[RMDB]
RNA sequence: GGGAACGACUCGAGUAGAGUCGAAAAAUUCUCCUCCUGGGCCAGGCACAGUGGCUCAUGUGUGUAAUCCCAGCAUUUUGGGAGUCCAAGGUGGGUGGAUCACUUGAGGUCAGGAAUUCAAGACCAAAUUACCCCGGUAUUUCGAUACCGGGGUAAUAAAAGAAACAACAACAACAAC
Reactivity to DMS in 0.01 (KOAc 150mM, MgCl2 10mM, bicine 150mM(pH8.5), 24C), signal-to-noise 1, nucleotides 027 to 126: a170u000u000c040u020c000c030u000c000c060u000g040g000g020c020c020a010g020g020c110a050c260a120g020u000g010g000c000u000c010a030u010g000u000g030u000g020u030a060a140u000c000c000c010a150g060c130a060u000u000u000u000g000g010g020a130g020u000c060c050a040a100g000g020u010g000g010g050u000g000g010a050u000c040a080c020u010u000g020a090g000g010u000c070a060g000g000a020a100u000u000c030a080a100g000a190c010c030a080a110

Description
Structure probing data (DMS) for a 177-nucleotide construct. Source: RMDB library OK2TRN, as collected in RNAgym.